[RMDB]
This 177-nucleotide RNA was probed chemically with DMS and 2A3. For 2A3, 15,721 sequencing reads were counted. 2A3 adducts were read by reverse transcription with SuperScript II with manganese.
RNA sequence: GGGAACGACUCGAGUAGAGUCGAAAAUCACAAAGCGGAUUUAGCUCGGUUGGGAGAGGUCCAGACCGAAGAUCUGGAAAUCCUGUGUCCGAGACACAGAAUUCGCACCAUAAACAACGGGAGAUUCAUUAAUACUCACUUUCGAGUGAGUAUUAAUAAAAGAAACAACAACAACAAC
Reactivity to DMS in 0.01 (KOAc 150mM, MgCl2 10mM, bicine 150mM(pH8.5), 24C), signal-to-noise 8, nucleotides 027 to 126: u020c060a130c190a070a110a110g010c000g000g000a010u000u000u010a130g000c010u000c000g000g010u010u020g010g000g000a030g020a120g030g010u010c010c010a010g000a000c040c130g040a160a140g000a300u010c000u010g000g000a030a070a090u000c010c010u000g010u050g020u030c000c020g010a020g000a060c110a070c170a120g020a010a010u000u000c010g010c010a150c080c090a080u030a090a080a090c180a050a070c100g010g000g010a130g010a080u020u010c100
Reactivity to 2A3 in 0.01 (KOAc 150mM, MgCl2 10mM, bicine 150mM(pH8.5), 24C), signal-to-noise 9, nucleotides 027 to 126: u110c030a030c070a120a100a010g020c010g010g000a000u000u010u020a020g010c000u000c010g020g030u090u180g050g020g010a060g000a050g050g140u000c000c000a000g000a000c010c100g230a160a060g040a170u000c000u000g000g010a020a000a000u020c010c000u090g040u040g060u140c010c010g040a010g150a050c030a000c000a050g040a010a010u000u000c010g000c000a030c010c010a050u240a090a150a050c070a060a020c080g060g030g010a080g010a050u100u050c010